[RMDB]
RNA sequence: GGGAACGACUCGAGUAGAGUCGAAAACACACUACAGCAUGUGACAAGUGCGCAAAAGUAGAAAAGUUUGUUGGACCAGUGGUAGCAGCACCUCUUGCAAUUCAUGGCACUGACGAAACAUGUGUGCAGUGGAGUACCUUUUCGAAGGUACUCCACUAAAAGAAACAACAACAACAAC
Reactivity to DMS in 0.01 (KOAc 150mM, MgCl2 10mM, bicine 150mM(pH8.5), 24C), signal-to-noise 2, nucleotides 027 to 126: c060a090c090a090c030u000a090c090a150g010c040a050u000g070u010g020a160c090a120a100g010u000g030c020g000c100a050a050a140a120g010u000a050g020a050a120a110a130g010u000u000u010g000u000u000g000g000a080c060c040a060g010u030g030g040u000a040g000c000a030g010c080a080c160c030u000c030u000u010g010c090a050a030u020u010c070a070u000g000g000c040a050c010u000g000a080c110g020a130a010a060c030a060u000g000u000g030u000g020c110